Conditions: 150 mM KOAc, 10 mM MgCl2 and 150 mM bicine (pH 8.5), 24 C. Chemical mapping of a 177-nucleotide RNA with 2A3 and DMS. The data come from the RNA Mapping Database (RMDB), library OK2TRN. 2A3 adducts were read by reverse transcription with SuperScript II with manganese. Values cover nucleotides 27 to 126. For 2A3, 1,153 sequencing reads were counted.
RNA sequence: GGGAACGACUCGAGUAGAGUCGAAAACAUCGACAGCGCGCUGGACGGGGUGCUGUUCCUCGACGAGGCCUACGCCCUGGUGGCCACCGGCGCCAAGAACGACUUCGGGUUGGUGGCCAUUGACACCAGCUACGGGACAGUUCGCUGUCCCGUAGCUAAAAGAAACAACAACAACAAC
Reactivity to 2A3 in 0.01 (KOAc 150mM, MgCl2 10mM, bicine 150mM(pH8.5), 24C), signal-to-noise 1, nucleotides 027 to 126: c050a140u080c010g060a010c040a000g000c050g020c000g000c110u040g050g060a060c010g020g040g020g040u010g030c070u040g050u120u090c010c010u000c030g250a250c100g020a040g060g000c030c020u060a030c000g060c000c020c000u010g030g000u030g000g040c000c000a000c010c030g020g030c130g070c000c000a010a000g010a070a070c090g300a170c100u070u080c060g000g000g060u010u030g000g060u080g000g050c000c000a000u020u040g000a000c000a000c050c020
Reactivity to DMS in 0.01 (KOAc 150mM, MgCl2 10mM, bicine 150mM(pH8.5), 24C), signal-to-noise 2, nucleotides 027 to 126: c080a120u000c040g020a050c070a080g030c060g000c230g060c050u000g000g000a180c060g030g010g020g000u000g000c060u000g000u000u010c010c050u000c020g010a110c220g000a040g010g010c300c020u000a080c100g000c010c000c040u000g000g010u000g000g030c020c010a010c010c000g000g000c000g050c000c050a040a000g000a270a210c300g010a100c050u000u000c150g030g010g060u000u000g000g020u000g000g020c010c030a000u000u000g000a110c170a190c060c050